[RMDB]
RNA sequence: GGGAACGACUCGAGUAGAGUCGAAAACGUAAGACGGGGAUAACGCGGAGUCAAACCAAAACGAGAUCGUGUGGAAGCCACCGUUUGAGGAUCGAAGCACUAAAUUAAAUCAAACUAGCUUAAGUUUAGCGUGUCUGUCCGCAUGCUUAAGUGAAAUCGACCAAACUAGCUUCGGCUAGUUUGGUCGAAAAGAAACAACAACAACAAC
Reactivity to 2A3 in 0.01 (KOAc 150mM, MgCl2 10mM, bicine 150mM(pH8.5), 24C), signal-to-noise 2, nucleotides 027 to 156: c050g050u090a090a000g030a040c040g010g040g040g010a040u050a160a000c020g000c000g100g020a000g030u030c030a050a050a140c010c040a050a050a010a030c090g020a050g010a140u130c050g000u000g000u040g040g030a030a000g050c010c000a030c020c000g000u000u020u030g030a020g000g000a020u080c040g020a000a010g000c000a010c050u170a090a140a060u220u180a020a010a060u070c010a000a040a000c000u010a000g020c000u000u000a000a000g000u040u040u110a030g010c010g040u080g020u150c150u140g110u050c010c000g020c030a030u040g030c000u010u010a010a000g010u020g010a010a000a000u010
Chemical mapping of a 207-nucleotide RNA with 2A3.
The reactions ran in a buffer of 150 mM KOAc, 10 mM MgCl2 and 150 mM bicine (pH 8.5), at 24 C.
2A3 adducts were read by reverse transcription with SuperScript II with manganese.
It was measured as part of the RMDB library ARCHII.